[RMDB]
RNA sequence: GGGAACGACUCGAGUAGAGUCGAAAACAGAAGGCAUUCCAGCAUUCUCAAGAUUUCUUACCAUUGCAUCAACACUAUAUCCUGGCAAAGAUAAGUCUGAAUCAAAAAGAUUUGCUUGAUGUUUUCUCAUAGGUAAUGGAUUCGUCCAUUACCUAUGAAAAGAAACAACAACAACAAC
Reactivity to DMS in 0.01 (KOAc 150mM, MgCl2 10mM, bicine 150mM(pH8.5), 24C), signal-to-noise 4, nucleotides 027 to 126: c100a080g000a090a040g000g000c040a070u030u010c040c050a040g010c030a020u000u010c000u000c040a090a200g000a030u000u000u010c030u000u030a070c040c010a060u000u010g000c040a030u020c060a050a080c080a070c140u010a090u050a070u020c040c030u020g020g000c040a030a020a100g000a070u010a030a030g030u020c120u000g000a070a030u030c080a050a060a110a060a040g000a040u020u010u010g000c090u000u000g000a040u000g000u000u000u000u010c030u010
Reactivity to 2A3 in 0.01 (KOAc 150mM, MgCl2 10mM, bicine 150mM(pH8.5), 24C), signal-to-noise 9, nucleotides 027 to 126: c040a020g050a050a010g030g000c020a040u140u070c020c020a010g000c010a020u070u000c020u010c030a070a070g020a080u030u060u020c010u030u050a050c020c020a070u020u070g010c010a060u070c060a130a130c030a040c130u140a110u050a070u300c020c060u090g050g000c030a040a050a040g050a100u070a060a020g040u000c090u140g070a030a030u040c040a040a050a030a060a080g040a080u060u040u060g020c020u010u010g010a010u010g030u000u010u030u010c030u000
This 177-nucleotide RNA was probed chemically with DMS and 2A3. DMS adducts were read by reverse transcription with MarathonRT. It was measured as part of the RMDB library OK1LIB. For 2A3 the reverse transcriptase was SuperScript II with manganese. The RNA was probed in 150 mM KOAc, 10 mM MgCl2 and 150 mM bicine (pH 8.5) at 24 C.